[RMDB]
RNA sequence: GGGAACGACUCGAGUAGAGUCGAAAAGUGCGAGAUAAUAUGAGCGCAAAUAUUAUCGACGACGAACGGGUCGGAGUAUUAUAGAGCGCAAUAUAAUACGAGCAGGACCGUCUGCGAGCACGAAAAAGGGAUAUACAUUGUUCGCAAUGUAUAUCCCAAAAGAAACAACAACAACAAC
Reactivity to 2A3 in 0.01 (KOAc 150mM, MgCl2 10mM, bicine 150mM(pH8.5), 24C), signal-to-noise 8, nucleotides 027 to 126: g060u040g010c040g030a080g040a060u060a070a040u050a070u090g130a120g100c080g000c100a020a150a010u040a010u030u030a040u030c020g040a030c020g030a020c010g020a160a050c110g070g070g010u030c020g010g010a030g020u010a010u030u000a010u020a020g080a040g080c070g000c060a030a000u040a000u010a020a050u030a020c030g020a040g040c030a030g050g090a050c000c020g050u060c020u050g020c020g040a030g010c010a010c030g090a090a020a000a040a010
Reactivity to DMS in 0.01 (KOAc 150mM, MgCl2 10mM, bicine 150mM(pH8.5), 24C), signal-to-noise 6, nucleotides 027 to 126: g010u000g020c000g020a160g000a030u000a010a020u000a020u010g020a200g010c120g050c100a070a070a030u000a000u000u000a040u010c010g000a230c080g020a110c050g020a090a110c080g000g010g020u020c020g010g010a220g000u000a010u000u000a020u000a010g000a180g020c090g000c070a120a060u010a010u010a020a010u010a010c030g000a180g010c150a070g000g000a110c060c060g020u020c030u000g020c040g000a140g000c020a010c020g010a060a060a070a110a060